[RMDB]
RNA sequence: GGGAACGACUCGAGUAGAGUCGAAAAGAAUUGGUAUGUAAGCUACAACUUCCGGUAGCUGCGUCACACUUUAAGAGUGUGCAUACUGAGCCGAAGCUCAGCUUCGGUCCCCCAAGGGAAGGUCAAACAUACUGCCGCGUUUCGACGCGGCAGUAUGAAAAGAAACAACAACAACAAC
Reactivity to DMS in 0.01 (KOAc 150mM, MgCl2 10mM, bicine 150mM(pH8.5), 24C), signal-to-noise 1, nucleotides 027 to 126: g000a200a080u000u020g000g000u020a000u000g000u000a300a090g010c000u000a000c000a040a020c080u010u000c000c000g000g010u000a000g020c000u000g080c030g000u000c000a000c000a000c000u000u060u030a130a100g000a010g130u000g000u000g000c040a000u000a000c050u000g000a120g030c000c000g000a030a030g000c030u030c230a300g040c000u010u000c000g030g020u000c030c000c000c140c160a100a000g000g000g060a000a000g000g050u100c060a080a150a100
Reactivity to 2A3 in 0.01 (KOAc 150mM, MgCl2 10mM, bicine 150mM(pH8.5), 24C), signal-to-noise 2, nucleotides 027 to 126: g030a030a020u030u000g010g020u010a000u000g000u000a010a000g000c000u000a000c000a150a080c040u010u000c000c010g000g000u010a000g000c000u000g000c000g000u010c010a000c000a000c010u100u110u150a300a150g220a000g300u000g000u000g000c000a000u000a000c000u000g000a000g000c000c000g000a000a000g000c000u060c300a100g000c000u040u000c010g000g000u000c000c000c000c000c030a000a040g100g060g000a000a000g000g070u130c090a000a020a060